[RMDB]
RNA sequence: GGGAACGACUCGAGUAGAGUCGAAAAGAUAUGGAAAUUGAUCGCUUGGAUUUACACGAUACAGCAAUGUGGGUCGGAAACGACCCACUAGCUGUAUCGUGUUGUCAGCGACCAAUUUCCUAAGUCAGAAAGAGAUAGUCUUCGGACUAUCUCUUUCAAAAGAAACAACAACAACAAC
Reactivity to DMS in 0.01 (KOAc 150mM, MgCl2 10mM, bicine 150mM(pH8.5), 24C), signal-to-noise 2, nucleotides 027 to 126: g020a080u010a300u000g010g000a010a000a010u000u000g010a030u000c020g000c010u010u010g020g030a030u000u010u000a010c000a000c000g000a020u000a000c000a010g020c010a110a110u020g010u000g000g000g010u000c000g000g030a120a120a240c000g020a030c000c000c000a000c000u000a090g010c000u000g000u000a010u000c020g010u000g010u000u000g010u000c010a030g010c020g010a020c010c000a000a000u000u000u000c000c000u010a020a100g010u000c060a160